[RMDB]
RNA sequence: GGGAACGACUCGAGUAGAGUCGAAAAUGGUCCUAAUACUGCUAGUCAAGAUCAAGUUAAGCUUGCUCUCUCGAUUUGCGAGUACUCCUUGGAUCUAUUUAUGAGAGAAUGGUUGAAUGGAGCAUCAGUCCACUAACUGUUUCGACAGUUAGUGGACAAAAGAAACAACAACAACAAC
Reactivity to 2A3 in 0.01 (KOAc 150mM, MgCl2 10mM, bicine 150mM(pH8.5), 24C), signal-to-noise 3, nucleotides 027 to 126: u050g040g020u000c000c000u020a050a030u060a080c000u010g000c010u020a010g010u010c010a030a010g000a160u300c010a010a000g040u070u260a150a040g120c010u000u010g000c000u000c000u000c000u010c010g010a010u010u020u080g040c050g020a020g000u020a050c030u080c040c040u010u010g080g000a010u000c010u040a070u090u150u020a200u180g100a080g000a010g020a110a060u110g050g020u080u020g030a070a090u130g040g020a030g030c010a030u030c040a010
Reactivity to DMS in 0.01 (KOAc 150mM, MgCl2 10mM, bicine 150mM(pH8.5), 24C), signal-to-noise 3, nucleotides 027 to 126: u000g020g010u000c010c020u000a050a150u010a030c030u010g010c020u010a020g020u000c020a030a030g010a020u010c010a050a020g000u000u010a090a240g030c010u000u000g000c030u000c010u000c010u000c040g000a050u000u000u010g010c020g030a080g020u010a070c130u010c060c020u010u000g010g000a040u000c010u000a060u000u010u000a130u010g010a160g020a110g010a060a040u000g010g020u000u010g000a110a050u010g010g010a040g010c100a050u000c090a130
Record summary:
The record gives the reactivity of an RNA of 177 nucleotides to 2A3 and DMS. It was measured as part of the RMDB library OK2TST. DMS adducts were read by reverse transcription with MarathonRT. The RNA was probed in 150 mM KOAc, 10 mM MgCl2 and 150 mM bicine (pH 8.5) at 24 C.